[RMDB]
RNA sequence: GGGAACGACUCGAGUAGAGUCGAAAAUUACCUUCGGGUAAGCUAUCGAUAUGGACCUCUUGUCAGAUUAAUCACCAGCGACGAAGUCGGAAACGACAGAGCUGGGAACUGAUCUUGGAUUUAGAGGUCCUAAGUCCACUUUGCUCUUCGGAGCAAAAGCAUUAUGUUUUUUCGAAAACAUAAUGCUAAAAGAAACAACAACAACAAC
Reactivity to DMS in 0.01 (KOAc 150mM, MgCl2 10mM, bicine 150mM(pH8.5), 24C), signal-to-noise 3, nucleotides 027 to 156: u000u010a010c000c010u010u000c250g080g020g010u000a010a020g000c120u010a100u000c050g020a140u000a210u010g010g010a030c000c000u000c010u010u010g020u000c010a090g000a050u010u000a000a050u000c080a160c010c010a020g010c010g040a300c120g020a130a150g000u000c020g060g010a180a130a270c010g020a030c000a080g000a300g030c000u000g020g000g010a050a040c050u010g030a020u000c000u010u030g040g010a100u000u000u000a010g000a050g000g010u000c000c000u000a000a080g000u010c010c050a150c080u000u000u030g010c030u010c000u010u000c270g040g010a040g010c010a010a010a040
Reactivity to 2A3 in 0.01 (KOAc 150mM, MgCl2 10mM, bicine 150mM(pH8.5), 24C), signal-to-noise 3, nucleotides 027 to 156: u040u010a020c000c000u020u030c250g070g010g000u040a030a020g060c100u230a150u300c060g040a110u050a070u220g000g000a000c000c000u000c000u010u010g000u020c000a000g010a020u010u040a020a070u050c160a050c140c000a000g040c000g210a300c070g070a280a020g000u000c000g060g020a140a080a040c000g000a000c010a020g060a010g000c000u010g000g000g010a010a040c000u000g010a000u010c010u080u200g180g000a020u270u260u070a000g000a000g000g000u000c000c000u000a000a000g000u020c000c020a120c030u040u050u030g000c000u020c000u050u090c240g120g020a000g000c000a010a010a040
Source: RMDB library RNAMAK, as collected in RNAgym.
This 207-nucleotide RNA was probed chemically with DMS and 2A3.
The 2A3 profile rests on 2,750 reads.
For DMS, 4,473 sequencing reads were counted.
DMS adducts were read by reverse transcription with MarathonRT.
2A3 adducts were read by reverse transcription with SuperScript II with manganese.
Conditions: 150 mM KOAc, 10 mM MgCl2 and 150 mM bicine (pH 8.5), 24 C.